Structure probing data (2A3) for a 207-nucleotide construct. Source: RMDB library VIROID, as collected in RNAgym.
RNA sequence: GGGAACGACUCGAGUAGAGUCGAAAAGGCGUGGAGAGAGGGCCGCGGUGCUCUGGAGUAGAGGCUCUGCCUUCGAAACACCAUCGAUCGUCCCUUCUUCUUUACCUUCUUCUGGCUCUUCCGAUGGAGACGCGACCGGUGGCAUCACCUCUCGGUUAUGAAUGUAAGACUUCGGUCUUACAUUCAUAAAAGAAACAACAACAACAAC
Reactivity to 2A3 in 0.01 (KOAc 150mM, MgCl2 10mM, bicine 150mM(pH8.5), 24C), signal-to-noise 3, nucleotides 027 to 156: g040g010c100g060u080g020g010a020g000a020g020a020g020g000g000c030c000g030c000g010g000u000g000c000u000c000u010g000g000a000g000u010a010g010a010g000g000c020u100c220u300g050c050c010u120u110c010g010a010a010a000c000a020c140c020a000u010c010g040a300u030c000g000u000c010c000c000u010u030c000u000u010c000u010u050u060a030c000c000u020u030c080u070u020c070u140g010g010c000u000c000u060u000c020c000g040a070u100g080g020a160g020a060c040g020c020g090a040c000c000g000g000u000g000g080c090a110u120c020a120c020c010u020c020u060c030g050g000u030u030